[RMDB]
RNA sequence: GGGAACGACUCGAGUAGAGUCGAAAAAGAUCUGGAGGUCUCCAGAGCAGCGUGGUCCCAGGAGGCAUACACAGAGAGCCACGGCCAGGGCUGAAACAGUCUGUUGAGUGCAGCCAUGGGGGACGUCCUGGAACAGUUCUUCAUCCUCACAGGGCUGACCAGCCCAUUAAUUCGUUAAUGGGCUGGUAAAAGAAACAACAACAACAAC
Reactivity to DMS in 0.01 (KOAc 150mM, MgCl2 10mM, bicine 150mM(pH8.5), 24C), signal-to-noise 1, nucleotides 027 to 156: a080g020a080u000c010u010g010g010a100g000g000u000c040u000c010c010a080g000a060g040c030a120g000c030g030u010g000g040u030c030c010c030a110g070g010a050g070g020c030a100u010a140c150a140c040a100g010a080g000a110g040c000c030a070c050g000g000c050c030a090g060g000g010c010u000g010a100a080a100c070a080g000u000c030u000g010u000u010g000a210g010u000g020c000a020g030c020c010a090u010g000g000g000g000g000a050c090g010u010c060c010u000g000g030a060a080c070a120g010u000u000c020u010u010c040a140u000c010c000u000c030a070c050a060g020g010g000c000u000g020
Reactivity to 2A3 in 0.01 (KOAc 150mM, MgCl2 10mM, bicine 150mM(pH8.5), 24C), signal-to-noise 2, nucleotides 027 to 156: a000g030a070u010c020u030g020g030a060g130g150u050c040u010c120c010a020g020a010g010c020a020g020c020g040u060g020g100u110c020c000c020a020g050g020a020g040g050c090a040u090a160c080a010c010a070g040a020g000a010g030c010c030a060c090g050g000c020c050a040g000g010g030c020u040g030a060a140a030c030a040g130u030c030u020g090u090u060g080a120g060u070g040c030a000g030c010c020a080u020g030g000g010g020g060a000c010g010u050c010c010u000g030g000a080a050c010a010g020u050u040c010u080u090c030a090u060c000c000u000c010a090c020a040g020g050g050c070u060g010

This 207-nucleotide RNA was probed chemically with DMS and 2A3. In probing experiments dimethyl sulfate is read out at A N1 and C N3, which are open when not base-paired. For 2A3, 1,241 sequencing reads were counted. For DMS, 2,822 sequencing reads were counted.